[RMDB]
RNA sequence: GGGAACGACUCGAGUAGAGUCGAAAAGAUAUGGAUUUAGGGAGAAAGCGGUCGGAAACGACCGCCUUUCAUCGAUCUAACGGUCCUAAGUCAAAGGCAUGUAACGCGUUCGCGCGUUACAUGCCAACAGUAGUAUGCGGUUCGCCGCAUACUACUGAAAAGAAACAACAACAACAAC
Reactivity to 2A3 in 0.01 (KOAc 150mM, MgCl2 10mM, bicine 150mM(pH8.5), 24C), signal-to-noise 2, nucleotides 027 to 126: g030a050u150a090u220g040g000a000u040u050u070a030g000g040g020a150g030a030a030a010g020c000g000g000u020c000g020g040a060a040a030c000g010a000c010c010g000c030c020u020u030u030c010a050u170c040g030a020u080c050u110a110a080c130g050g040u050c000c000u030a090a010g050u030c060a140a120a060g010g020c000a000u030g000u010a000a010c000g010c010g030u060u070c290g010c000g010c000g130u010u010a000c000a010u000g010c000c000a000a000
Reactivity to DMS in 0.01 (KOAc 150mM, MgCl2 10mM, bicine 150mM(pH8.5), 24C), signal-to-noise 3, nucleotides 027 to 126: g020a090u000a150u000g010g010a010u000u000u000a020g000g000g010a190g010a020a100a070g010c000g000g000u000c000g000g000a060a050a180c000g010a010c000c000g000c110c020u000u000u000c050a120u000c140g010a110u010c040u000a040a080c300g000g020u000c000c010u000a030a040g010u000c040a080a110a130g010g000c010a000u000g010u000a000a000c020g010c000g010u010u010c190g010c020g010c000g020u000u000a000c000a000u000g010c000c000a000a020
An RNA of 177 nucleotides, treated with 2A3 and DMS and read out base by base. Values cover nucleotides 27 to 126. The reactions ran in a buffer of 150 mM KOAc, 10 mM MgCl2 and 150 mM bicine (pH 8.5), at 24 C. For 2A3, 3,418 sequencing reads were counted.